Overview: The data come from the RNA Mapping Database (RMDB), library VIROID. The record gives the reactivity of an RNA of 177 nucleotides to 2A3 and DMS. 2A3 adducts were read by reverse transcription with SuperScript II with manganese. The 2A3 profile rests on 1,166 reads.
[RMDB]
RNA sequence: GGGAACGACUCGAGUAGAGUCGAAAAAGGCCUCCGCGGACCUGCAGAGAAAAGAAGAAGGGCCCAGAGGGGAAUGAGCCUCGUCGUCGACGAAGGGGUGCAUUCCGAAGAGCUGGCCUGGCGUCGUGAAUGCAUUUAUCUUCGGAUAAAUGCAUUCAAAAGAAACAACAACAACAAC
Reactivity to 2A3 in 0.01 (KOAc 150mM, MgCl2 10mM, bicine 150mM(pH8.5), 24C), signal-to-noise 1, nucleotides 027 to 126: a000g050g030c000c000u000c040c040g030c050g030g080a150c000c000u020g000c050a000g040a000g040a150a100a080a010g100a100a020g060a020a090g040g020g040c030c130c010a050g040a020g050g210g000g000a010a000u000g000a020g010c000c000u030c000g020u000c010g040u030c070g030a300c060g020a100a000g000g010g000g040u030g020c020a010u030u000c010c020g040a070a040g060a010g050c020u010g010g000c020c000u040g000g040c080g070u130c000g040u020
Reactivity to DMS in 0.01 (KOAc 150mM, MgCl2 10mM, bicine 150mM(pH8.5), 24C), signal-to-noise 2, nucleotides 027 to 126: a090g000g000c020c010u000c050c050g020c090g000g030a100c030c000u000g020c060a090g000a110g010a160a090a080a050g000a140a060g000a110a160g000g020g000c060c020c030a040g010a070g020g010g000g000a000a030u000g000a170g000c010c010u010c010g000u010c010g010u000c220g000a070c040g030a090a080g000g010g030g030u020g000c000a020u000u000c000c010g020a110a050g010a100g000c030u010g000g010c030c000u000g000g010c090g000u000c020g010u010
The reactions ran in a buffer of 150 mM KOAc, 10 mM MgCl2 and 150 mM bicine (pH 8.5), at 24 C.